Structure probing data (2A3 and DMS) for a 177-nucleotide construct. The RNA was probed in 150 mM KOAc, 10 mM MgCl2 and 150 mM bicine (pH 8.5) at 24 C. The 2A3 profile rests on 990 reads. DMS adducts were read by reverse transcription with MarathonRT.

RNA sequence: GGGAACGACUCGAGUAGAGUCGAAAAUGCAGUGGCGGCAUAAGGGUCCUUCUGGCGGUUGCUGUGUCCGAACAGGCCCACCUCUUCACCGUAGUAGCGCUCAAAGCCCAGCGAGGCGCCGAGCUGCCACGUAGUCCUGGUUCGCCAGGACUACGUGAAAAGAAACAACAACAACAAC
Reactivity to 2A3 in 0.01 (KOAc 150mM, MgCl2 10mM, bicine 150mM(pH8.5), 24C), signal-to-noise 2, nucleotides 027 to 126: u100g030c020a010g000u040g060g060c000g020g080c050a050u080a100a210g100g040g030u090c050c000u050u080c080u090g020g010c000g060g000u090u120g030c090u060g000u020g090u070c040c020g040a050a040c030a020g000g050c040c000c030a040c010c020u070c020u090u110c010a000c030c000g020u050a020g040u040a030g070c010g010c020u000c020a040a080a060g020c000c000c050a120g020c080g180a300g010g000c020g000c040c010g030a020g000c050u070g040c030
Reactivity to DMS in 0.01 (KOAc 150mM, MgCl2 10mM, bicine 150mM(pH8.5), 24C), signal-to-noise 1, nucleotides 027 to 126: u000g030c050a060g000u010g060g000c000g000g020c020a120u050a130a110g000g000g000u010c050c080u000u040c010u000g010g000c100g010g000u030u010g050c190u000g000u000g000u000c100c040g020a030a130c150a090g000g020c100c020c000a050c040c000u000c000u000u000c040a140c040c060g020u040a070g010u000a070g010c110g040c060u020c130a000a160a210g010c050c000c050a270g000c300g000a080g000g000c230g000c080c220g060a300g070c000u000g000c100

Description
Source: RMDB library OK1LIB, as collected in RNAgym. For 2A3 the reverse transcriptase was SuperScript II with manganese.